The record gives the reactivity of an RNA of 207 nucleotides to 2A3 and DMS. For 2A3, 3,819 sequencing reads were counted. DMS adducts were read by reverse transcription with MarathonRT. The data come from the RNA Mapping Database (RMDB), library M2RFPK.
RNA sequence: GGGAACGACUCGAGUAGAGUCGAAAAAGGUGAUUUCUCCUGCACCUUUAUCAAUGGAGGAAAUCGACUUUGCUGUGGGUCCCAAAGGGACCUUAGGUGCAGACAGUUACCGGCGGUGAAGUGUGAGCAUAGGUUCGUGUCUUCGGACACGAACCAACCGUUAUGAUAUCUUCGGAUAUCAUAACGGAAAAGAAACAACAACAACAAC
Reactivity to 2A3 in 0.01 (KOAc 150mM, MgCl2 10mM, bicine 150mM(pH8.5), 24C), signal-to-noise 4, nucleotides 027 to 156: a000g010g010u020g010a040u020u070u020c010u020c010c000u140g040c010a020c020c000u070u230u120a100u060c070a030a040u300g000g010a010g000g040a020a030a050u080c030g020a020c020u010u010u040g010c020u020g010u110g020g000g000u020c020c020c000a130a140a090g000g000g000a000c000c000u010u050a020g000g000u000g000c000a020g100a300c020a010g020u020u090a020c010c000g020g000c010g020g040u030g010a040a040g030u050g070u110g070a030g030c070a100u110a230g000g010u000u000c010g000u000g000u000c000u030u050c140g100g000a000c000a000c000g000a000a000c010c000a000a000
Reactivity to DMS in 0.01 (KOAc 150mM, MgCl2 10mM, bicine 150mM(pH8.5), 24C), signal-to-noise 2, nucleotides 027 to 156: a030g030g030u010g000a300u010u030u000c020u010c000c010u000g010c040a110c060c010u000u000u010a100u000c210a050a100u000g010g020a060g000g020a040a050a060u000c050g000a000c030u000u000u000g000c020u010g000u000g020g010g010u000c000c070c010a100a090a150g000g030g010a010c020c000u000u000a000g010g040u000g010c010a150g000a120c110a100g000u020u000a060c000c000g000g060c070g010g000u000g000a040a100g020u000g000u000g000a130g000c080a190u010a080g010g030u000u010c000g090u000g000u000c000u010u000c300g050g000a010c000a010c000g000a000a000c000c000a010a010